[RMDB]
RNA sequence: GGGAACGACUCGAGUAGAGUCGAAAACAAAAGUGGAUAAGAGAGUCUACACACAAAGAUCUUUUGAGUGGUGCAUACAUCAUCAUGAAGACCACAUGGCGAGUAGGAGCACUAGAGAGGACCAGGGUAAAUGGGAAACAUUCGUGUUUCCCAUUUAAAAAGAAACAACAACAACAAC
Reactivity to DMS in 0.01 (KOAc 150mM, MgCl2 10mM, bicine 150mM(pH8.5), 24C), signal-to-noise 8, nucleotides 027 to 126: c060a070a070a100a100g010u000g000g010a080u010a050a090g010a110g010a110g000u000c030u010a060c090a080c120a070c130a050a080a080g000a060u000c020u000u000u000u000g000a120g020u010g010g000u010g020c110a100u000a060c060a060u010c040a010u010c040a020u000g010a080a080g010a070c130c090a060c070a060u000g010g000c050g010a050g000u000a030g010g010a080g000c030a030c070u000a070g010a060g010a050g000g010a060c040c030a050g000g000g020
Reactivity to 2A3 in 0.01 (KOAc 150mM, MgCl2 10mM, bicine 150mM(pH8.5), 24C), signal-to-noise 3, nucleotides 027 to 126: c040a000a080a020a060g040u040g040g020a080u080a170a060g100a010g010a030g100u010c050u030a040c060a010c010a000c020a080a100a030g060a100u050c050u010u100u050u060g120a080g030u080g000g000u030g030c020a020u050a110c000a120u030c010a000u020c010a020u050g060a110a010g070a120c010c010a010c020a050u010g010g000c010g010a000g010u040a020g020g100a050g020c010a000c020u040a030g030a000g000a000g130g010a020c020c040a010g080g000g000
Annotation:
An RNA of 177 nucleotides, treated with DMS and 2A3 and read out base by base. For DMS, 9,965 sequencing reads were counted. Conditions: 150 mM KOAc, 10 mM MgCl2 and 150 mM bicine (pH 8.5), 24 C. For 2A3 the reverse transcriptase was SuperScript II with manganese.